[RMDB]
RNA sequence: GGGAACGACUCGAGUAGAGUCGAAAACGCCGGUGAUUUCGCCGCCAGCCUCACGGUGAAACGUCUGUGUGCGCCCGAAGCGGUCCACCAGCCCGGUCAGUACCCGGUACGGCGGCAGCGGCGCGGGGACUCGAAAAUGGUUCGCCAUUUUCGAGUCAAAAGAAACAACAACAACAAC
Reactivity to DMS in 0.01 (KOAc 150mM, MgCl2 10mM, bicine 150mM(pH8.5), 24C), signal-to-noise 3, nucleotides 027 to 126: c050g030c010c010g020g030u000g010a160u000u000u010c030g000c000c000g010c050c080a250g000c020c010u010c080a230c100g000g040u010g010a070a040a100c070g000u010c010u010g010u000g010u000g020c300g000c030c020c010g020a110a130g020c070g020g000u000c250c000a020c020c000a070g010c120c030c030g000g000u000c060a120g000u000a120c300c000c010g000g000u000a150c130g010g010c080g020g000c020a100g030c040g000g020c010g010c050g000g010g000
Reactivity to 2A3 in 0.01 (KOAc 150mM, MgCl2 10mM, bicine 150mM(pH8.5), 24C), signal-to-noise 2, nucleotides 027 to 126: c000g000c010c050g050g080u170g060a300u060u130u160c060g000c010c000g030c010c020a030g030c020c000u060c020a060c040g000g030u030g010a100a040a020c030g020u030c020u010g150u050g030u010g060c070g060c020c040c010g020a200a040g030c200g040g000u020c010c000a020c000c000a020g000c040c080c000g030g020u050c020a010g050u090a040c000c000c040g000g020u080a040c070g010g000c000g010g000c000a000g080c000g020g020c000g000c050g020g020g030
The record gives the reactivity of an RNA of 177 nucleotides to DMS and 2A3. The 2A3 profile rests on 2,319 reads. The data come from the RNA Mapping Database (RMDB), library OK2TST. DMS adducts were read by reverse transcription with MarathonRT. The DMS profile rests on 1,880 reads.